[RMDB]
RNA sequence: GGGAACGACUCGAGUAGAGUCGAAAAUAGUUAUAUGAUCAAGAUAAGGAAAGGAUAUGUACACCUCCUACACGUUAGCAAGCGAGCUCUAUCUAAAAUAUCAUGUCCAGGUCAAAAUAGCAUUAUCCUAAAAACACAACAUCAAGCAUGGUUGAGCCAAUUAUGCUGGUUUCGACCAGCAUAAUUGAAAAGAAACAACAACAACAAC
Reactivity to 2A3 in 0.01 (KOAc 150mM, MgCl2 10mM, bicine 150mM(pH8.5), 24C), signal-to-noise 5, nucleotides 027 to 156: u080a020g040u050u040a060u030a050u140g040a060u090c070a060a060g030a140u170a190a040g040g020a090a080a090g020g000a030u040a050u150g070u050a040c030a030c040c030u020c020c000u060a030c100a000c050g050u050u050a020g020c060a130a000g040c010g070a010g010c030u000c010u050a090u010c040u060a050a070a040a070u130a050u080c040a010u050g010u000c040c020a010g010g010u020c010a010a030a070a130u040a020g000c000a020u060u080a050u110c010c020u070a080a050a010a020a010c080a000c020a070a060c010a070u120c070a060a010g060c030a030u070g020g000u010u020g010a010g030c000
Reactivity to DMS in 0.01 (KOAc 150mM, MgCl2 10mM, bicine 150mM(pH8.5), 24C), signal-to-noise 3, nucleotides 027 to 156: u000a110g040u000u000a100u000a100u010g020a070u000c020a090a060g010a120u000a090a110g000g000a100a140a220g010g000a070u000a040u000g030u010a100c060a090c070c010u000c030c020u000a050c090a120c090g030u020u010a060g030c050a040a110g020c070g010a140g010c040u000c070u000a060u000c050u000a060a040a090a120u000a050u000c020a060u000g010u000c020c010a100g010g010u000c030a040a100a040a110u010a090g020c050a070u000u010a060u010c040c030u010a020a060a050a080a050c090a060c030a040a020c060a050u010c020a060a100g030c060a050u010g020g020u000u000g040a120g010c100